[RMDB]
RNA sequence: GGGAACGACUCGAGUAGAGUCGAAAAGACUGACCACUGAAGUAAAGGUGUGACUUCAGACAGGCAGUCGCUCUAGUCACAUCCAAAAUCCAUGCCGCAAUCAAGGACCACUUAAUGGCACCGAUCAAAUUACCCGAUAGUUCGCUAUCGGGUAAUUAAAAGAAACAACAACAACAAC
Reactivity to DMS in 0.01 (KOAc 150mM, MgCl2 10mM, bicine 150mM(pH8.5), 24C), signal-to-noise 4, nucleotides 027 to 126: g000a030c010u000g000a140c020c020a210c020u000g000a020a020g000u000a060a110a110g020g030u000g000u000g000a060c010u000u000c020a010g020a060c200a190g020g010c010a020g000u000c010g010c070u000c020u000a070g000u000c060a050c110a080u010c020c060a060a060a060a070u000c030c020a060u010g000c010c030g020c070a070a060u010c100a070a070g000g000a130c030c040a050c080u000u010a060a080u010g000g000c030a070c010c030g000a090u000c130a090
Reactivity to 2A3 in 0.01 (KOAc 150mM, MgCl2 10mM, bicine 150mM(pH8.5), 24C), signal-to-noise 2, nucleotides 027 to 126: g020a020c010u020g110a280c000c010a020c020u000g000a000a020g010u040a100a120a090g070g050u090g060u060g120a010c000u030u000c040a070g040a100c040a020g030g000c020a000g000u000c000g020c010u020c010u000a040g030u020c010a000c010a130u020c040c020a020a060a080a050u040c040c020a040u090g010c010c010g030c050a010a050u040c020a050a060g070g000a010c010c000a050c040u100u190a080a050u150g040g010c020a020c040c010g010a020u090c020a020
About this RNA:
This 177-nucleotide RNA was probed chemically with DMS and 2A3. High 2A3 reactivity points to a flexible backbone, as in loops and unpaired stretches. DMS adducts were read by reverse transcription with MarathonRT. The DMS profile rests on 2,869 reads. Conditions: 150 mM KOAc, 10 mM MgCl2 and 150 mM bicine (pH 8.5), 24 C.